[RMDB]
RNA sequence: GGGAACGACUCGAGUAGAGUCGAAAAUAAAGAUUUGGCUUGGGGAAACUGAUACUCUAUCAGAGUUGGAACCGAUCCUCAACCCGGUCAAUUUCCGAGACGACCGAGAAAUGAUUGAAGGGGCGGCUCAUACGCCCUCGUUCGCGAGGGCGUAUGAAAAAGAAACAACAACAACAAC
Reactivity to DMS in 0.01 (KOAc 150mM, MgCl2 10mM, bicine 150mM(pH8.5), 24C), signal-to-noise 3, nucleotides 027 to 126: u000a070a130a100g000a020u000u030u040g030g020c120u000u020g000g000g000g000a080a140a120c110u000g010a120u000a040c020u030c020u000a090u020c170a080g000a000g000u030u010g030g020a150a160c150c090g050a060u020c010c000u000c030a050a040c090c040c050g000g010u000c000a080a230u000u010u030c010c020g000a110g030a090c090g000a020c010c030g000a160g010a130a080a070u000g010a140u010u030g000a120a090g000g000g000g000c060g000g000c110
Reactivity to 2A3 in 0.01 (KOAc 150mM, MgCl2 10mM, bicine 150mM(pH8.5), 24C), signal-to-noise 3, nucleotides 027 to 126: u170a000a110a010g070a010u050u050u200g000g000c040u010u140g020g020g020g040a000a200a090c020u000g020a040u040a090c040u000c040u160a130u270c070a040g000a030g000u020u070g040g020a060a070c050c050g020a050u020c000c000u030c000a020a040c000c000c040g000g000u010c010a050a060u070u040u000c010c020g040a020g030a040c100g050a030c000c050g020a030g110a160a170a120u210g050a050u090u170g030a100a080g000g020g000g000c030g010g000c010